[RMDB]
RNA sequence: GGGAACGACUCGAGUAGAGUCGAAAACUCGAAUCUUUCGAGAUUCGAGACUCUCGAAGUGUCAAUAAGAUCGAAAAGAUCGCCGAGCAUAAAAUAGACACAAUGCUGCUUGAUUCGUCAAGCAGAACCAACAUGCGUUUUUCGAAACGCAUGUUGGAAAAGAAACAACAACAACAAC
Reactivity to 2A3 in 0.01 (KOAc 150mM, MgCl2 10mM, bicine 150mM(pH8.5), 24C), signal-to-noise 2, nucleotides 027 to 126: c010u000c010g000a000a010u000c010u070u110u160c250g130a030g010a010u000u000c000g000a000g000a020c020u010c000u010c050g090a280a040g000u000g000u000c000a020a040u140a240a080g010a000u000c000g070a190a140a120a100g000a010u010c000g010c040c050g060a080g050c030a150u120a080a080a070a090u110a060g000a000c020a010c030a030a080u180g020c000u000g000c000u020u000g000a010u050u060c200g000u010c120a000a000g000c020a000g000a000a020
Reactivity to DMS in 0.01 (KOAc 150mM, MgCl2 10mM, bicine 150mM(pH8.5), 24C), signal-to-noise 2, nucleotides 027 to 126: c010u000c010g000a060a010u000c010u000u000u010c160g010a010g000a000u000u000c000g050a000g030a090c080u000c000u000c020g020a140a070g020u000g000u010c000a080a120u000a090a070g010a030u000c000g000a100a020a110a250g000a000u000c000g000c300c120g030a020g000c300a050u020a030a030a070a060u020a050g000a010c000a000c000a110a090u000g010c000u000g000c000u010u000g020a030u000u030c300g030u010c000a000a010g000c000a000g000a040a120